[RMDB]
RNA sequence: GGGAACGACUCGAGUAGAGUCGAAAAAACUAAUUAUAUAGAGGAUAUGUCUCAAUUUGUUCUGCAUUAAUGCCACAGUGGGGAUGGAGGCCAGGCCGUGGCCAGAGCAGAUACGUAGGCCCAUGAACGUGUUUGAAUCUUUCGAGAUUCAAACACGAAAAGAAACAACAACAACAAC
Reactivity to 2A3 in 0.01 (KOAc 150mM, MgCl2 10mM, bicine 150mM(pH8.5), 24C), signal-to-noise 2, nucleotides 027 to 126: a000a000c100u150a140a120u210u050a060u050a080u110a150g020a070g080g000a000u030a070u230g090u030c020u010c090a060a010u070u000u000g050u000u030c020u000g060c020a100u070u120a100a050u190g020c040c000a030c000a040g030u040g040g000g030g000a040u040g080g120a120g000g110c000c000a000g010g060c020c040g030u030g000g000c000c000a000g020a000g000c000a000g000a050u050a040c040g000u010a000g000g120c000c000c000a000u090g050a090a000
Reactivity to DMS in 0.01 (KOAc 150mM, MgCl2 10mM, bicine 150mM(pH8.5), 24C), signal-to-noise 1, nucleotides 027 to 126: a060a030c030u010a030a030u110u100a110u030a190u000a100g020a110g020g030a200u020a030u050g000u000c020u000c010a130a080u050u010u000g000u010u000c060u000g010c080a160u090u020a050a020u050g000c060c010a000c040a050g080u050g000g000g030g000a020u020g020g010a020g030g000c010c010a050g010g050c030c060g000u000g000g040c000c060a050g010a090g000c000a000g000a070u010a000c050g000u000a070g030g000c000c020c000a130u020g030a030a140